[RMDB]
RNA sequence: GGGAACGACUCGAGUAGAGUCGAAAACAGAGCUUGCAAAAUCCGGCAAAUUCACGAUUGAUCAGAUUAAAUCGAUCACAAAGACUACCGCUCAGUGGUCAACGGUAACGGGUGAAUCAAGCGACAAGAUAACCGAUUACUUUAAUAAGAUUGCUGGGAGUGUUUACAGUUUCGACUGUAAACACUCAAAAGAAACAACAACAACAAC
Reactivity to 2A3 in 0.01 (KOAc 150mM, MgCl2 10mM, bicine 150mM(pH8.5), 24C), signal-to-noise 2, nucleotides 027 to 156: c030a030g030a000g040c050u090u140g050c110a130a110a050a170u040c000c000g030g000c010a000a050a090u190u100c090a060c110g090a110u040u050g010a020u030c110a140g090a170u160u270a120a170a070u090c040g020a010u010c010a010c060a050a130a000g010a010c010u020a010c010c030g030c060u040c070a040g010u030g000g000u000c020a000a040c100g030g000u010a020a000c030g040g020g060u070g170a050a060u050c020a070a010g110c050g140a040c070a100a050g010a070u090a040a010c020c010g120a140u080u020a020c000u080u090u070a100a080u090a150a070g080a190u040u070g000c000u060g050g020
Reactivity to DMS in 0.01 (KOAc 150mM, MgCl2 10mM, bicine 150mM(pH8.5), 24C), signal-to-noise 1, nucleotides 027 to 156: c100a240g000a300g000c000u040u020g010c070a090a100a180a060u000c010c050g020g010c050a000a170a140u000u000c090a140c100g040a110u000u000g010a010u010c040a160g000a290u000u010a070a050a300u050c010g070a020u060c010a070c100a020a150a020g000a100c020u000a010c000c000g000c060u000c050a110g050u000g100g000u020c010a090a010c010g010g000u000a000a070c000g000g000g000u040g000a090a110u010c020a000a060g000c050g010a140c100a040a160g010a110u000a150a070c050c050g000a060u000u000a120c100u000u010u040a050a180u010a060a120g000a100u000u000g020c000u000g010g000